[RMDB]
RNA sequence: GGGAACGACUCGAGUAGAGUCGAAAAAGUCCCUCUGGUCCAUUGUAAUGUCGACCAAGAACAGUUUCAGGUGGGGAGUUUGGCUGGGGCGGCACAUUUGUUAAAAGAUAACGCAAGUGUCCAAAGGGAAUCAAUCCCAUUUCGAUGGGAUUGAUUCAAAAGAAACAACAACAACAAC
Reactivity to 2A3 in 0.01 (KOAc 150mM, MgCl2 10mM, bicine 150mM(pH8.5), 24C), signal-to-noise 3, nucleotides 027 to 126: a000g120u000c000c000c000u000c030u030g000g000u000c010c060a040u040u070g230u300a070a150u150g040u100c060g000a010c010c000a000a040g000a040a060c040a090g050u010u050u110c020a030g010g060u120g010g010g010g010a040g020u140u130u030g020g000c040u000g000g000g000g030c030g030g000c040a020c010a040u060u020u080g000u020u020a070a070a000a000g140a090u050a100a010c020g000c000a070a020g020u020g030u050c020c000a050a010a000g080g030
Reactivity to DMS in 0.01 (KOAc 150mM, MgCl2 10mM, bicine 150mM(pH8.5), 24C), signal-to-noise 3, nucleotides 027 to 126: a170g000u000c020c000c010u020c080u010g000g010u000c000c050a020u000u020g010u020a160a080u010g010u040c270g010a020c010c010a080a050g000a040a130c160a100g000u000u000u020c050a070g010g000u010g000g010g000g000a090g000u020u000u020g000g020c060u000g000g030g000g000c110g010g000c050a000c040a050u020u000u010g010u000u010a050a060a110a080g000a070u030a050a090c240g020c060a060a040g010u000g010u000c040c020a100a090a100g000g000